[RMDB]
RNA sequence: GGGAACGACUCGAGUAGAGUCGAAAACUGCAGUGAAGCCUGAGUUGCUUCUCAUGGAGGCUAGGUUCCAAGAGCAAAGGUGGAUGCUGCAGGGCUUCCUGAGGCCUGGGCUAUGGAACUUCUCAGCCAGCACUAGAGGAUUCGUCCUCUAGUGCUGAAAAGAAACAACAACAACAAC
Reactivity to 2A3 in 0.01 (KOAc 150mM, MgCl2 10mM, bicine 150mM(pH8.5), 24C), signal-to-noise 2, nucleotides 027 to 126: c000u010g000c000a030g020u000g060a000a000g010c000c040u110g160a230g230u120u070g050c000u170u130c010u020c040a130u040g020g030a020g050g060c150u190a080g230g000u130u010c010c000a040a020g030a000g040c000a070a000a000g030g020u030g020g010a020u200g020c000u000g010c000a000g010g000g030c020u010u040c000c000u020g030a080g050g050c020c040u100g040g070g010c020u040a060u130g050g040a040a070c000u090u000c010u020c020a010g030c030
Reactivity to DMS in 0.01 (KOAc 150mM, MgCl2 10mM, bicine 150mM(pH8.5), 24C), signal-to-noise 4, nucleotides 027 to 126: c030u000g010c020a010g000u000g000a270a220g010c030c010u000g010a180g010u000u000g020c020u000u000c020u000c130a170u010g010g010a030g000g010c120u000a080g010g010u000u000c010c000a050a120g000a060g000c020a020a060a040g010g010u000g000g000a230u010g000c010u000g010c070a040g000g010g010c150u010u000c020c010u010g010a130g010g010c030c020u010g020g000g010c030u000a070u010g010g000a070a050c070u000u000c030u000c050a100g010c130